[RMDB]
RNA sequence: GGGAACGACUCGAGUAGAGUCGAAAAUCGGGGAUUAUGGAUGGUGCAGAAAGCUCACCAUUUCGUAGAUUCUCCUGAAUAGCAAUGGAGUCUGAAGGUUAACCCAAAGAAUUAAACUGUUGAACAGUACGUUUUUAUCCUUCGGGAUAAAAACGUAAAAAGAAACAACAACAACAAC
Reactivity to 2A3 in 0.01 (KOAc 150mM, MgCl2 10mM, bicine 150mM(pH8.5), 24C), signal-to-noise 3, nucleotides 027 to 126: u070c000g000g010g010g010a010u010u040a010u030g010g030a000u000g000g080u010g050c090a010g250a200a240a090g120c030u050c020a000c000c000a000u040u050u030c040g000u020a020g020a190u110u000c000u010c010c010u090g080a120a100u050a090g030c070a040a100u040g040g040a070g000u060c080u090g090a090a040g120g000u090u220a080a120c020c000c000a070a210a000g040a000a030u140u110a170a150a160c110u090g030u090u000g110a120a050c030a070g070
Reactivity to DMS in 0.01 (KOAc 150mM, MgCl2 10mM, bicine 150mM(pH8.5), 24C), signal-to-noise 3, nucleotides 027 to 126: u000c040g010g000g010g020a070u010u000a010u000g000g030a000u010g000g000u000g000c210a090g010a170a100a140g000c110u030c010a000c040c010a000u050u000u000c020g030u020a010g000a120u030u000c010u030c000c000u020g000a050a090u010a080g000c130a050a040u030g020g010a020g000u000c060u000g050a100a180g020g000u030u020a110a170c000c000c010a040a100a120g000a050a070u030u040a030a150a080c100u000g010u000u000g010a080a130c050a040g000
An RNA of 177 nucleotides, treated with 2A3 and DMS and read out base by base. The RNA was probed in 150 mM KOAc, 10 mM MgCl2 and 150 mM bicine (pH 8.5) at 24 C. It was measured as part of the RMDB library OK1LIB. DMS adducts were read by reverse transcription with MarathonRT. For DMS, 3,239 sequencing reads were counted.